[RMDB]
RNA sequence: GGGAACGACUCGAGUAGAGUCGAAAAAUCAAGAGCUGAAACUAUAGGGUUGGGGAUGCUUCCUAGGAAGAUUCCUUCUAACUUGGGGACAGGUGAGCAGAUGCCACAAGCAGCUAGGAAUUGCCAAAUCUUGUCGAAAAUUCGUUUUCGACAAGAUAAAAGAAACAACAACAACAAC
Reactivity to DMS in 0.01 (KOAc 150mM, MgCl2 10mM, bicine 150mM(pH8.5), 24C), signal-to-noise 5, nucleotides 027 to 126: a070u010c050a070a090g010a080g010c030u010g010a100a100a110c090u010a090u020a060g010g010g020u000u000g020g000g000g010a060u000g020c040u000u000c010c040u000a150g010g010a050a030g010a120u000u000c020c010u000u000c050u000a070a090c040u010u000g000g000g000g000a140c070a070g000g010u010g010a080g010c070a100g000a090u010g000c020c030a040c070a040a080g010c050a040g000c060u000a060g000g010a050a060u000u010g000c060c080a070a100
Reactivity to 2A3 in 0.01 (KOAc 150mM, MgCl2 10mM, bicine 150mM(pH8.5), 24C), signal-to-noise 3, nucleotides 027 to 126: a020u100c070a080a040g040a010g070c030u050g020a060a050a040c030u040a090u140a180g020g000g060u070u070g010g010g000g000a010u070g150c020u000u010c010c020u070a110g080g040a020a030g020a020u060u050c010c000u060u070c050u060a080a110c010u040u070g010g020g010g010a010c030a030g070g050u070g060a010g050c030a000g020a150u150g050c000c000a020c000a030a030g010c020a000g000c020u010a010g000g070a050a060u040u040g020c010c000a050a140